The record gives the reactivity of an RNA of 207 nucleotides to 2A3 and DMS. It was measured as part of the RMDB library OK3TST. The reactions ran in a buffer of 150 mM KOAc, 10 mM MgCl2 and 150 mM bicine (pH 8.5), at 24 C. 2A3 adducts were read by reverse transcription with SuperScript II with manganese. The 2A3 profile rests on 8,627 reads. Reactivities are given for positions 27 through 156. For DMS the reverse transcriptase was MarathonRT.
[RMDB]
RNA sequence: GGGAACGACUCGAGUAGAGUCGAAAAUAUGGACGAUAAUAAUUUAGUUCAUGGAAAUAUCGCUAUGAUUGGUGUGAAUGACUCCGCUAACUCUGUGGGGUGCACAGUGCUUUCCCCACAUAGAAUAAAUUAGCAUUCCGACUGUGAUAAUAAUACCCAAAUAUCAUGCAUUCGUGCAUGAUAUUUGAAAAGAAACAACAACAACAAC
Reactivity to 2A3 in 0.01 (KOAc 150mM, MgCl2 10mM, bicine 150mM(pH8.5), 24C), signal-to-noise 9, nucleotides 027 to 156: u130a020u010g000g010a000c020g050a020u050a190a060u130a110a100u240u100u150a040g000u000u020c010a010u010g030g040a030a100a030u090a020u050c030g000c050u050a060u130g060a240u110u120g040g000u050g040u050g100a090a090u090g040a070c050u020c070c030g000c040u020a040a040c010u000c010u020g010u000g000g000g010g020u020g000c010a060c060a130g160u110g110c030u110u140u150c000c000c000c000a000c000a000u020a000g030a030a040u090a090a090a020u080u060a010g010c010a020u070u030c010c010g020a030c050u050g010u020g090a000u020a090a030u100a040a030u080a110c000c000
Reactivity to DMS in 0.01 (KOAc 150mM, MgCl2 10mM, bicine 150mM(pH8.5), 24C), signal-to-noise 4, nucleotides 027 to 156: u010a060u000g010g020a060c010g020a170u000a090a150u010a080a140u010u000u010a150g010u000u000c010a050u000g010g000a080a100a140u000a050u000c060g010c050u000a070u010g010a150u000u000g010g000u000g000u000g020a080a140u000g000a100c030u000c020c010g000c030u010a060a120c050u000c060u010g030u000g030g000g010g050u000g000c010a090c050a130g010u000g000c030u000u000u000c010c010c000c040a030c020a080u000a030g010a100a110u000a030a050a100u000u000a040g010c010a140u000u000c030c030g010a070c140u000g020u000g000a090u000a060a110u000a060a110u010a130c070c040